[RMDB]
RNA sequence: GGGAACGACUCGAGUAGAGUCGAAAAGAAGAGCAGUCAGAUAAUCUUGUGCAGGAUGAAUGCUCGUAACUGCAUAGCACAAGUAGAUGUAGAUAACUUUAAUCUCGCAUAGCGGAGGAGCCGCAGACCCAUCAUGAGUGUUCGCACUCAUGAUGGGAAAAGAAACAACAACAACAAC
Reactivity to 2A3 in 0.01 (KOAc 150mM, MgCl2 10mM, bicine 150mM(pH8.5), 24C), signal-to-noise 4, nucleotides 027 to 126: g080a020a000g000a010g000c000a000g030u010c040a000g010a260u100a090a040u100c030u030u020g000u020g000c010a030g060g180a070u120g110a100a040u040g000c010u020c030g020u030a040a020c010u030g000c000a000u010a020g010c000a010c010a010a040g010u030a040g030a020u050g070u080a000g000a130u070a080a040c020u080u100u090a070a090u010c000u010c020g040c140a130u100a040g030c040g020g000a130g040g080a020g110c000c010g010c000a000g050a070
Reactivity to DMS in 0.01 (KOAc 150mM, MgCl2 10mM, bicine 150mM(pH8.5), 24C), signal-to-noise 2, nucleotides 027 to 126: g020a180a060g000a050g000c000a050g000u000c010a110g020a120u020a080a080u000c000u000u010g000u000g010c010a030g000g050a130u020g000a060a090u000g020c000u010c010g020u010a040a040c040u000g000c040a040u010a100g000c000a000c010a090a010g060u000a010g010a070u000g000u000a060g000a010u040a050a050c080u000u020u010a140a070u000c000u000c010g070c120a070u020a110g000c060g020g000a210g030g030a110g080c000c020g020c000a060g000a120
An RNA of 177 nucleotides, treated with 2A3 and DMS and read out base by base.
For 2A3, 3,546 sequencing reads were counted.
The data come from the RNA Mapping Database (RMDB), library OK1LIB.
The RNA was probed in 150 mM KOAc, 10 mM MgCl2 and 150 mM bicine (pH 8.5) at 24 C.
For DMS, 2,886 sequencing reads were counted.